[RMDB]
RNA sequence: GGGAACGACUCGAGUAGAGUCGAAAAGGAACGUUGUUCGCAACGUUCCGUGCCGGAAACGGACAUGACGAUCGCGCGCAUGUCCGGAAACCGUAAACGCGAGCAUCAUGGUGUUCGCACCAUGAAAAUUGUCCUGCGAAUUCGUUCGCAGGACAAUAAAAGAAACAACAACAACAAC
Reactivity to 2A3 in 0.01 (KOAc 150mM, MgCl2 10mM, bicine 150mM(pH8.5), 24C), signal-to-noise 1, nucleotides 027 to 126: g000g000a000a000c000g010u000u050g010u120u070c200g000c090a010a000c010g010u010u010c000c000g000u010g020c000c050g030g000a250a220a000c000g010g000a000c000a010u050g060a100c000g040a070u020c040g010c000g000c000g040c070a000u000g000u000c000c000g020g040a050a010a000c060c020g060u110a100a180a000c020g000c010g040a000g100c040a070u060c010a020u010g000g010u010g050u030u060c170g000c050a000c000c000a020u030g020a070a060a040
Reactivity to DMS in 0.01 (KOAc 150mM, MgCl2 10mM, bicine 150mM(pH8.5), 24C), signal-to-noise 2, nucleotides 027 to 126: g020g000a000a000c000g030u010u010g020u000u020c180g010c000a020a000c010g020u000u000c000c000g000u000g020c150c030g000g000a020a100a160c000g010g000a030c010a010u000g010a100c010g000a030u000c100g000c060g000c050g020c000a010u000g000u000c000c000g000g000a020a060a160c080c050g000u010a040a070a090c080g010c020g000a020g030c300a170u030c010a000u000g020g000u000g020u000u010c120g030c020a000c020c000a010u010g000a020a040a070